Annotation
The record gives the reactivity of an RNA of 177 nucleotides to 2A3 and DMS. Values cover nucleotides 27 to 126. The RNA was probed in 150 mM KOAc, 10 mM MgCl2 and 150 mM bicine (pH 8.5) at 24 C. DMS adducts were read by reverse transcription with MarathonRT. It was measured as part of the RMDB library OK2TST. For DMS, 3,649 sequencing reads were counted.

RNA sequence: GGGAACGACUCGAGUAGAGUCGAAAAAUUAGCGUCUAUUGUAUGGAGGCGGUUCUCAGCCUUGUACCGCUCUACCACGGGCAUACAAAGCUCCACAUUGGUGCGGAAGCGACGCCGAAGAACCUCACGUACGGAUAAUGUUCGCAUUAUCCGUACGAAAAGAAACAACAACAACAAC
Reactivity to 2A3 in 0.01 (KOAc 150mM, MgCl2 10mM, bicine 150mM(pH8.5), 24C), signal-to-noise 2, nucleotides 027 to 126: a000u100u060a010g020c010g010u000c020u030a120u090u110g070u050a070u080g130g010a020g030g000c030g010g040u130u000c080u000c040a040g000c000c000u000u040g040u020a020c030c040g040c020u090c050u110a100c040c030a060c090g010g000g000c020a040u090a100c020a030a110a040g000c010u020c050c020a100c040a230u060u250g060g000u040g030c050g060g010a090a010g040c020g010a020c010g000c000c010g050a050a050g040a040a030c020c010u020c000a080
Reactivity to DMS in 0.01 (KOAc 150mM, MgCl2 10mM, bicine 150mM(pH8.5), 24C), signal-to-noise 5, nucleotides 027 to 126: a100u010u000a110g020c020g010u000c030u000a170u030u010g010u010a080u010g000g020a040g000g000c010g010g010u000u000c070u000c050a200g010c000c040u010u000g000u010a060c020c040g000c050u010c070u010a130c170c120a130c160g010g000g020c010a110u000a040c130a030a070a260g010c010u000c020c010a060c180a160u000u000g020g040u000g010c050g000g010a120a090g030c080g010a010c050g020c000c040g030a080a060g000a070a090c050c020u000c160a150